[RMDB]
An RNA of 177 nucleotides, treated with DMS and 2A3 and read out base by base.
For DMS the reverse transcriptase was MarathonRT.
It was measured as part of the RMDB library M2PK50.
2A3 adducts were read by reverse transcription with SuperScript II with manganese.
RNA sequence: GGGAACGACUCGAGUAGAGUCGAAAAGUAUGAUCCUUCGGGAUCAUACAAAUAAACUCGCCUAUAGCCAGGCGAGAACCAAAGCGGCUAAAGCAAAGGAAAAAAUCGGAUACUUCGGUAUCCGAAAGUAUCUCUUUCACUUCGGUGAAAGAGAUACAAAAGAAACAACAACAACAAC
Reactivity to DMS in 0.01 (KOAc 150mM, MgCl2 10mM, bicine 150mM(pH8.5), 24C), signal-to-noise 1, nucleotides 027 to 126: g020u000a000u000g020a000u000c000c000u000u000c220g040g020g070a000u010c000a000u020a000c000a000a140a030u010a070a150a300c030u000c000g000c000c000u000a010u000a030g020c040c020a100g000g000c000g020a000g000a010a170c040c060a080a040a040g030c170g000g020c010u000a000a170a240g000c130a040a060a130g000g050a000a000a020a130a180a070u000c000g030g000a000u000a050c000u000u010c160g030g050u000a000u000c000c000g000a000a010a030
Reactivity to 2A3 in 0.01 (KOAc 150mM, MgCl2 10mM, bicine 150mM(pH8.5), 24C), signal-to-noise 1, nucleotides 027 to 126: g010u000a000u000g000a020u000c010c000u030u040c150g100g000g000a010u010c010a000u010a000c000a010a020a000u090a020a060a010c010u000c000g000c010c010u100a110u030a160g030c030c020a000g030g000c000g000a000g070a000a000c010c000a000a030a030g130c080g020g000c030u100a060a000a050g090c080a060a080a090g000g130a100a070a030a030a020a050u030c000g020g010a010u000a000c000u050u090c240g080g000u000a000u000c000c020g000a000a000a000